Chemical mapping of a 177-nucleotide RNA with 2A3 and DMS. Reactivities are given for positions 27 through 126. The reactions ran in a buffer of 150 mM KOAc, 10 mM MgCl2 and 150 mM bicine (pH 8.5), at 24 C. High 2A3 reactivity points to a flexible backbone, as in loops and unpaired stretches.

[RMDB]
RNA sequence: GGGAACGACUCGAGUAGAGUCGAAAAGCUACUGGUGGAGAAUCCGCCGCCGUGCCACCGAAGGGGCGAAGGCGAAAUCCAAAGGCAAGGCCCGCCGCGGCUCUCAGUUCAAGGUUCUCGAACACGGUAUCCACGUGUUAUUCGUAACACGUGGAUAAAAAGAAACAACAACAACAAC
Reactivity to 2A3 in 0.01 (KOAc 150mM, MgCl2 10mM, bicine 150mM(pH8.5), 24C), signal-to-noise 2, nucleotides 027 to 126: g050c030u050a010c050u150g030g070u080g050g070a090g060a060a130u060c080c040g000c050c020g020c010c010g070u090g030c010c000a080c010c040g090a120a090g040g020g010g000c050g020a060a030g060g020c010g030a080a030a040u040c010c000a100a050a010g040g000c020a020a060g030g020c000c000c000g050c050c010g000c020g000g020c000u000c020u000c020a030g010u030u080c070a110a030g070g020u040u000c030u010c000g070a100a010c060a020c080g060g040
Reactivity to DMS in 0.01 (KOAc 150mM, MgCl2 10mM, bicine 150mM(pH8.5), 24C), signal-to-noise 3, nucleotides 027 to 126: g020c050u000a060c080u010g020g020u000g000g030a080g000a120a140u010c060c030g020c030c020g000c110c020g020u010g000c010c050a080c060c080g020a160a110g010g000g000g000c020g010a040a150g000g030c010g010a020a070a100u010c050c050a040a140a170g010g020c060a090a120g020g000c070c030c060g000c060c100g030c080g010g000c070u000c020u010c030a120g000u020u000c090a060a080g000g020u000u000c010u000c010g010a080a080c120a040c110g000g010